[RMDB]
Conditions: 150 mM KOAc, 10 mM MgCl2 and 150 mM bicine (pH 8.5), 24 C.
This 177-nucleotide RNA was probed chemically with DMS.
For DMS, 848 sequencing reads were counted.
Source: RMDB library OK2TST, as collected in RNAgym.
DMS adducts were read by reverse transcription with MarathonRT.
RNA sequence: GGGAACGACUCGAGUAGAGUCGAAAACAUGUACGGAAUAUGCUUGGUUCAUGGCAGUCCACAGGACUUCAAAUACCAAGACUUUAGAGGAUACCUGCCAGGAUCCGGGUUGGUACGGCUGAAUAAAAAAUCCUAGCACUUUCGAGUGCUAGGAUUUAAAAGAAACAACAACAACAAC
Reactivity to DMS in 0.01 (KOAc 150mM, MgCl2 10mM, bicine 150mM(pH8.5), 24C), signal-to-noise 1, nucleotides 027 to 126: c050a130u000g020u010a090c100g000g010a130a100u000a120u010g000c000u000u000g020g020u000u000c180a210u010g000g010c170a030g020u020c000c010a140c230a070g020g010a030c020u000u010c040a060a060a100u000a090c110c050a010a010g000a100c080u020u000u020a030g010a090g000g000a080u000a070c110c050u020g020c070c060a080g000g010a080u000c030c000g020g000g010u010u010g000g010u000a020c100g000g010c080u000g000a040a080u050a000a050a060